[RMDB]
RNA sequence: GGGAACGACUCGAGUAGAGUCGAAAAUUUCAUAAGCAUCAACUGCAAAUUCUUUGGAUUUUUUCUUUCAUCAAUGUUCUCUGACCUCCAGAGUUACCUACAGUUAACAUAUUUUAUAAUGGACAUUGUAGAGAGGCUGUAAAAGAGAUUUUAGGUAGCGUACGAUAUGAUUCGUCAUAUCGUACGCAAAAGAAACAACAACAACAAC
Reactivity to 2A3 in 0.01 (KOAc 150mM, MgCl2 10mM, bicine 150mM(pH8.5), 24C), signal-to-noise 1, nucleotides 027 to 156: u090u070u010c060a090u160a000a090g050c000a000u100c050a000a040c060u000g000c030a000a090a150u150u020c090u150u090u140g080g000a080u100u020u060u100u070u120c120u120u150u100c040a160u060c050a210a140u150g030u120u000c020u000c000u010g030a070c010c010u040c000c020a020g040a040g050u040u120a020c000c000u010a000c010a060g010u050u060a150a000c010a040u140a170u070u080u160u180a200u190a110a060u110g010g000a000c010a040u000u160g020u000a020g010a010g010a040g040g000c020u050g120u300a000a060a080a000g110a000g010a040u120u090u070u060a150g000g080u110a030